[RMDB]
RNA sequence: GGGAACGACUCGAGUAGAGUCGAAAAUGUAGGUGAAUGCUUUGGUGAUGUAUUCGCAAGUUUGCAUGGCGAUUGCUCCGUGAUUGGUUGAUGUGAUGAAUAUACGCGAUCCCAUCCAGCGAGUUUUAGCAAAACGUGCUAUUCCUGCGAUUGUCGACCAUGGCACGCAAUUCGUUGCGUGCCAUGGAAAAGAAACAACAACAACAAC
Reactivity to 2A3 in 0.01 (KOAc 150mM, MgCl2 10mM, bicine 150mM(pH8.5), 24C), signal-to-noise 2, nucleotides 027 to 156: u130g020u070a050g060g050u040g010a000a010u060g010c020u030u050u080g000g060u050g030a020u020g020u100a120u040u070c020g000c060a030a070g010u040u050u100g040c070a030u050g060g000c020g060a090u020u090g000c000u010c050c050g020u100g050a080u040u150g040g020u060u050g060a090u030g050u010g050a050u020g030a140a000u090a020u010a150c100g010c060g050a010u050c010c010c000a000u090c000c010a060g050c050g160a090g030u010u000u010u100a060g000c080a080a040a060a030c050g070u050g000c000u050a100u060u060c000c010u050g040c050g090a120u050u000g100u060c010g000a020
Source: RMDB library OK3TST, as collected in RNAgym. Chemical mapping of a 207-nucleotide RNA with 2A3. Reactivities are rounded to 0.1 and cut off at 0 and 3. As a SHAPE reagent, 2A3 marks flexible, mostly unpaired nucleotides at the ribose 2'-OH. 2A3 adducts were read by reverse transcription with SuperScript II with manganese. The 2A3 profile rests on 1,049 reads.